This 177-nucleotide RNA was probed chemically with DMS and 2A3.

RNA sequence: GGGAACGACUCGAGUAGAGUCGAAAAGCUGCCUCUGACGUCCUUCUCCCCCGGAAACGGGGCCGAAGGGUGGUAAAGCGCGUCGCCUGGCGCUUGCACGGGUAUGCGUGGUGGUCGACCCUGGCCGCGUGGCGAUAUUAUUCGUAAUAUCGCCACGAAAAGAAACAACAACAACAAC
Reactivity to DMS in 0.01 (KOAc 150mM, MgCl2 10mM, bicine 150mM(pH8.5), 24C), signal-to-noise 4, nucleotides 027 to 126: g010c020u010g010c010c000u000c170u010g020a170c050g010u010c000c010u000u000c010u010c300c010c000c000c000g000g000a080a070a180c000g030g000g010g030c070c050g000a010a020g010g000g010u000g010g020u000a070a050a080g010c030g010c010g020u010c100g020c050c050u010g000g010c010g010c050u000u000g010c040a090c130g010g010g010u000a020u000g000c020g000u000g020g010u000g010g010u000c030g020a170c020c010c010u010g010g020c030c050g000
Reactivity to 2A3 in 0.01 (KOAc 150mM, MgCl2 10mM, bicine 150mM(pH8.5), 24C), signal-to-noise 2, nucleotides 027 to 126: g010c010u020g030c010c000u050c070u070g060a030c010g020u020c010c000u010u000c010u040c010c010c000c010c000g020g000a010a020a010c010g000g000g000g010c010c010g000a010a000g000g010g000u010g010g030u100a080a060a020g010c010g000c000g080u090c080g080c030c060u060g080g000c010g000c080u080u150g010c130a110c080g010g070g010u070a050u200g030c030g010u050g050g040u020g010g020u040c020g050a160c000c000c020u050g050g040c000c000g000
For DMS the reverse transcriptase was MarathonRT.